Background:
Structure probing data (2A3 and DMS) for a 177-nucleotide construct. The DMS profile rests on 2,076 reads. As a SHAPE reagent, 2A3 marks flexible, mostly unpaired nucleotides at the ribose 2'-OH. It was measured as part of the RMDB library RFM100.
RNA sequence: GGGAACGACUCGAGUAGAGUCGAAAAGAUGUAAUCAUUGGCGGCGCUUCUGCGCCCCGGGGCUGGUGAUGAAACAAAGCAAAUGCCAGUACGAUGGCGACAGGCGCGACUCUUCCCAUAGUUUAUCCCCAUGAGGAGAUUUCGAUCUCCUCAUGGGAAAAGAAACAACAACAACAAC
Reactivity to 2A3 in 0.01 (KOAc 150mM, MgCl2 10mM, bicine 150mM(pH8.5), 24C), signal-to-noise 3, nucleotides 027 to 126: g090a020u100g020u170a120a050u180c040a040u040u120g060g040c070g040g010c000g000c020u070u070c050u180g000c010g020c000c020c000c010g000g000g080g000c020u010g000g090u050g030a090u050g050a070a130a130c160a200a050a000g090c030a060a050a020u150g000c000c000a000g000u030a040c040g040a060u100g020g000c000g070a100c020a020g020g000c000g000c010g070a090c000u010c030u070u030c000c000c000a010u060a010g000u020u020u060a070u090c000
Reactivity to DMS in 0.01 (KOAc 150mM, MgCl2 10mM, bicine 150mM(pH8.5), 24C), signal-to-noise 2, nucleotides 027 to 126: g000a050u030g050u000a080a180u010c020a040u000u010g000g030c140g000g010c010g000c010u000u040c070u000g000c040g020c000c000c100c000g000g000g020g000c010u000g050g000u000g000a150u020g000a060a020a110c190a130a140a160g000c030a010a030a160u000g030c000c020a000g000u030a010c060g010a070u000g000g000c060g010a110c060a000g000g030c080g000c010g020a080c040u010c050u020u000c000c000c010a090u050a060g000u010u000u060a120u040c150
The RNA was probed in 150 mM KOAc, 10 mM MgCl2 and 150 mM bicine (pH 8.5) at 24 C.